[RMDB]
RNA sequence: GGGAACGACUCGAGUAGAGUCGAAAACGCAAUUUCGACCAGAAAAGUGCUUUUAGGAGCAGGUUGGCGCAGGGUACAACGACUGGCGAAAUUGGAGCAAUUGGCGCAGCACUUGCAUCCCUGCAAACCCAUCGCUAGGGUUCGCCCUAGCGAUGGGAAAAGAAACAACAACAACAAC
Reactivity to 2A3 in 0.01 (KOAc 150mM, MgCl2 10mM, bicine 150mM(pH8.5), 24C), signal-to-noise 2, nucleotides 027 to 126: c000g000c020a020a020u000u020u020c230g180a300c050c030a050g050a020a250a010a000g050u040g090c000u010u060u080u230a190g120g000a070g000c100a000g010g170u010u000g020g000c010g030c000a010g000g020g060u060a030c010a000a000c050g060a020c000u000g000g020c020g000a010a020a010u030u070g070g010a040g000c040a010a300u110u130g030g000c060g040c100a000g000c030a000c020u000u050g000c000a060u130c000c000c000u000g040c000a060a000a040
Notes
This 177-nucleotide RNA was probed chemically with 2A3. 2A3 adducts were read by reverse transcription with SuperScript II with manganese. The data come from the RNA Mapping Database (RMDB), library OK1LIB. Values are in units of 0.01, from 0 to 300, in steps of 10.